[RMDB]
RNA sequence: GGGAACGACUCGAGUAGAGUCGAAAAUCAAUAUCUUCAGGAGAGGUAGACCAGCAAAGUGACAUUUCCACUGAAAUAAUUUUUCAAUUUCUUGUAAUAGGACAUGAAAGUUGGUCCAGGGAAAUUGAUUCCAUUCGAAGCUCCCUUUGUAGGACAAGCAUACUAUAGCAUUCGUGCUAUAGUAUGCAAAAGAAACAACAACAACAAC
Reactivity to DMS in 0.01 (KOAc 150mM, MgCl2 10mM, bicine 150mM(pH8.5), 24C), signal-to-noise 3, nucleotides 027 to 156: u000c030a090a120u010a060u000c030u000u000c020a150g020g040a190g010a100g010g030u000a060g020a130c040c020a110g020c050a050a110a100g000u000g020a090c040a180u000u010u000c020c030a090c020u000g000a020a040a040u000a030a060u010u010u000u010u000c040a030a100u000u000u000c000u010u000g020u000a090a140u000a080g000g000a130c040a090u000g000a100a080a140g020u010u000g010g000u000c000c020a240g010g000g000a040a040a080u000u010g000a090u000u000c020c020a110u000u000c020g000a070a120g010c040u000c020c000c010u000u000u000g000u010a060g020g010a070c070a050a210
Reactivity to 2A3 in 0.01 (KOAc 150mM, MgCl2 10mM, bicine 150mM(pH8.5), 24C), signal-to-noise 5, nucleotides 027 to 156: u040c010a020a050u050a030u080c050u090u060c030a000g030g030a070g020a010g040g040u090a040g040a090c030c030a030g060c070a080a090a040g040u060g050a060c030a070u050u060u020c040c030a050c060u030g010a010a050a040u070a030a040u100u050u040u070u030c020a010a010u010u010u010c010u020u050g070u090a140a160u070a260g000g010a000c000a020u120g140a250a140a100g100u150u160g060g010u000c000c010a010g040g000g000a000a000a010u010u010g010a010u050u000c020c020a040u050u080c050g050a040a020g060c080u060c030c000c010u080u090u130g110u150a040g030g010a010c010a060a020